[RMDB]
An RNA of 207 nucleotides, treated with 2A3 and read out base by base. The reactions ran in a buffer of 150 mM KOAc, 10 mM MgCl2 and 150 mM bicine (pH 8.5), at 24 C.

RNA sequence: GGGAACGACUCGAGUAGAGUCGAAAACGCUGGGUGUCGGGAUACUAAGAGGUAUAGAACUCUCCUGAAGCGCGCACGGGAGAUCCCUAUACUACCCACCUUAGUAUUCUCUAGCGUGCACCUGUGCUGAAGCGCGCACGGCAACCGAAAGGUGCGAUCAGGUGACAGGCUUCGGCCUGUCACCUGAAAAAGAAACAACAACAACAAC
Reactivity to 2A3 in 0.01 (KOAc 150mM, MgCl2 10mM, bicine 150mM(pH8.5), 24C), signal-to-noise 1, nucleotides 027 to 156: c020g000c010u040g060g000g130u210g140u160c100g040g020g000a000u000a010c000u000a000a000g010a000g020g000u000a000u000a000g140a160a070c010u070c000u070c030c010u130g070a300a230g000c000g000c000g050c000a010c000g000g030g000a010g000a010u040c020c020c000u000a000u000a000c010u010a030c050c100c000a060c000c000u000u000a000g000u000a010u090u000c060u020c060u050a030g020c010g040u020g000c000a000c000c000u100g060u020g080c030u040g060a220a050g000c000g010c000g010c000a000c040g030g000c010a090a200c120c010g150a250a160a060g000g000u000g000c010g000a060
2A3 adducts were read by reverse transcription with SuperScript II with manganese.